[RMDB]
RNA sequence: GGGAACGACUCGAGUAGAGUCGAAAACUCCAGCCUACACUUUUACAACAGUGAAACCUGGCGCAGCAUUUAGUGUGUUAGCAUGCUAUAAUGGUCGUCCGACUGGUACAUUCACUGUUGUAAUGCGCGAAGACAAUCAGUUCGCUGAUUGUCUUCGAAAAGAAACAACAACAACAAC
Reactivity to DMS in 0.01 (KOAc 150mM, MgCl2 10mM, bicine 150mM(pH8.5), 24C), signal-to-noise 1, nucleotides 027 to 126: c050u000c020c040a080g000c030c060u000a120c110a080c110u010u010u000u020a010c000a020a040c010a010g010u000g000a020a080a080c000c010u000g000g000c010g040c190a080g010c000a000u000u000u000a000g000u000g040u010g000u000u040a130g020c000a010u000g010c000u010a000u000a020a010u000g000g000u000c020g000u030c070c150g000a080c150u010g010g010u000a040c220a300u000u000c000a000c000u000g010u000u000g000u000a000a020u000g000c240g010
Reactivity to 2A3 in 0.01 (KOAc 150mM, MgCl2 10mM, bicine 150mM(pH8.5), 24C), signal-to-noise 2, nucleotides 027 to 126: c020u000c020c010a020g060c020c040u160a100c100a080c050u050u010u010u120a000c000a010a000c000a000g010u000g000a030a010a010c000c050u020g010g000c030g030c060a030g060c010a010u000u010u020a020g010u000g000u020g010u040u060a100g130c010a010u040g000c000u010a020u060a260a020u020g120g140u070c010g030u000c030c030g080a100c110u090g000g010u080a080c010a050u010u040c010a010c000u020g000u000u020g000u000a000a000u010g050c100g010
This 177-nucleotide RNA was probed chemically with DMS and 2A3. The 2A3 profile rests on 1,662 reads. Values cover nucleotides 27 to 126. It was measured as part of the RMDB library 15KREP.